The record gives the reactivity of an RNA of 177 nucleotides to DMS. DMS adducts were read by reverse transcription with MarathonRT.

[RMDB]
RNA sequence: GGGAACGACUCGAGUAGAGUCGAAAAAUGGCAGCAACAAGAAAGUGCUUAGGUUGAUUGAAUUUAUUUAAGCGCUGAUACAAUGCUGCCAGAACAAUUUAAAAGCCAAGAACAGUUCAGUUUAAUGUUGGUUCAUAAACUUCGGUUUAUGAACCAAAAAAGAAACAACAACAACAAC
Reactivity to DMS in 0.01 (KOAc 150mM, MgCl2 10mM, bicine 150mM(pH8.5), 24C), signal-to-noise 2, nucleotides 027 to 126: a070u000g000g020c000a010g010c010a030a040c160a070a120g050a100a100a060g010u000g000c010u000u000a000g000g010u000u000g020a040u000u060g020a170a300u030u010u000a010u020u020u000a010a000g020c000g000c000u000g000a150u060a120c250a090a080u000g020c000u000g070c000c000a000g040a060a020c130a020a060u040u030u020a060a100a130a070g020c040c060a040a090g000a040a070c090a090g000u010u030c170a180g000u000u000u000a080a090u030g030